An RNA of 177 nucleotides, treated with DMS and 2A3 and read out base by base.
The 2A3 profile rests on 2,147 reads.
RNA sequence: GGGAACGACUCGAGUAGAGUCGAAAAAAACUACUUUCUCAGCGCAGGAAUACAACAUGGCUGAAUAUUCGGCAAUUGAAAGAGUCGAUAAGUGCUGUCUCGAAUGUAUUUCGUAGUGGUGCACACAUCGUCGAGUAUUAUUCGUAAUACUCGACGAAAAAGAAACAACAACAACAAC
Reactivity to DMS in 0.01 (KOAc 150mM, MgCl2 10mM, bicine 150mM(pH8.5), 24C), signal-to-noise 4, nucleotides 027 to 126: a040a050a060c110u020a080c130u010u010u000c040u000c020a070g020c080g020c060a080g010g010a040a040u030a040c160a050a090c090a080u010g010g010c010u000g000a080a100u000a150u000u000c000g040g020c010a100a130u000u000g010a110a050a130g000a060g000u000c000g010a080u020a080a090g020u000g010c030u000g010u000c030u000c060g030a030a030u010g010u000a080u000u000u000c010g000u010a060g020u000g000g020u000g000c030a050c080a120c230a130
Reactivity to 2A3 in 0.01 (KOAc 150mM, MgCl2 10mM, bicine 150mM(pH8.5), 24C), signal-to-noise 3, nucleotides 027 to 126: a010a000a010c120u190a100c040u120u100u080c060u010c030a000g000c130g070c070a040g070g070a140a090u180a190c040a120a000c020a190u100g030g000c010u000g020a060a010u090a100u090u010c000g030g000c150a230a300u020u030g020a030a030a020g050a020g000u020c040g030a050u050a180a050g020u020g000c020u030g080u070c010u000c030g040a060a030u190g110u250a160u090u040u030c010g000u010a000g030u020g080g070u040g010c020a020c010a010c000a100
DMS adducts were read by reverse transcription with MarathonRT. For DMS, 2,790 sequencing reads were counted.